[RMDB]
RNA sequence: GGGAACGACUCGAGUAGAGUCGAAAAGAUAUGGAGGAAUGUAGAACUACGCUCGAUGUCGGAAACGACAUCCGAGCGCUACCGCUUCCUCCUAAGUCAAACUGACAUCCGUUCGCGGAUGUCAGAAGGUAUAUGUGUCCUUCGGGACACAUAUACCAAAAGAAACAACAACAACAAC
Reactivity to 2A3 in 0.01 (KOAc 150mM, MgCl2 10mM, bicine 150mM(pH8.5), 24C), signal-to-noise 2, nucleotides 027 to 126: g030a020u090a080u160g010g010a000g020g040a020a040u300g010u020a000g010a170a070c180u200a100c300g010c010u000c000g010a010u000g000u040c020g030g000a060a090a010c000g020a000c000a020u020c080c070g000a010g000c000g000c010u000a010c020c000g040c030u010u000c000c000u020c000c000u000a040a000g030u010c040a090a060a100c010u000g000a000c000a000u000c020c010g010u050u090c300g000c000g120g030a010u010g010u010c000a000g000a020a020
Reactivity to DMS in 0.01 (KOAc 150mM, MgCl2 10mM, bicine 150mM(pH8.5), 24C), signal-to-noise 2, nucleotides 027 to 126: g010a020u010a300u000g000g000a010g030g000a130a000u020g010u010a050g010a050a040c160u010a270c060g020c000u000c020g000a010u000g000u010c000g020g000a090a080a200c000g000a030c000a000u000c100c080g000a000g020c000g000c000u000a000c050c030g000c020u000u000c010c000u010c000c000u020a000a040g000u000c020a160a130a230c020u000g000a000c000a000u010c000c000g010u000u000c220g010c020g010g000a010u010g000u000c000a000g010a030a020